Structure probing data (DMS and 2A3) for a 177-nucleotide construct. Source: RMDB library OK2TRN, as collected in RNAgym. For DMS, 646 sequencing reads were counted. Reactivities are given for positions 27 through 126. For 2A3, 952 sequencing reads were counted. DMS adducts were read by reverse transcription with MarathonRT.

RNA sequence: GGGAACGACUCGAGUAGAGUCGAAAAUAACGAAAUCUGACGAUUGCUCCACAGAUCACGCUCUGGCCUAUAAGGCGCACACAGCCUCCGUUCAGGCGUUCUUGAACAUAACUAUUGGAGGACAGUCGAUAUUCGCACGAUUCGUCGUGCGAAUAUCAAAAGAAACAACAACAACAAC
Reactivity to DMS in 0.01 (KOAc 150mM, MgCl2 10mM, bicine 150mM(pH8.5), 24C), signal-to-noise 1, nucleotides 027 to 126: u000a030a070c120g000a070a090a110u000c030u000g070a110c090g000a080u000u000g040c020u000c010c040a190c120a080g000a050u000c080a050c120g000c000u010c020u010g000g030c160c080u000a020u040a030a030g000g010c010g040c160a070c180a080c190a170g000c010c000u000c070c060g000u000u000c030a030g000g000c250g010u000u000c000u000u030g000a100a090c030a080u000a060a190c080u000a180u000u000g000g000a030g030g000a010c110a060g010u000c080
Reactivity to 2A3 in 0.01 (KOAc 150mM, MgCl2 10mM, bicine 150mM(pH8.5), 24C), signal-to-noise 1, nucleotides 027 to 126: u130a050a110c050g060a170a040a060u060c090u050g080a060c030g050a050u010u100g010c020u030c030c000a060c000a020g060a080u100c040a020c060g030c030u020c000u070g040g030c040c010u160a130u010a300a030g030g040c030g020c030a030c010a010c020a040g010c010c000u000c000c020g000u030u040c040a000g000g050c080g090u120u000c030u010u070g000a040a000c030a050u220a160a100c060u080a110u210u130g020g040a000g000g030a020c000a000g020u080c020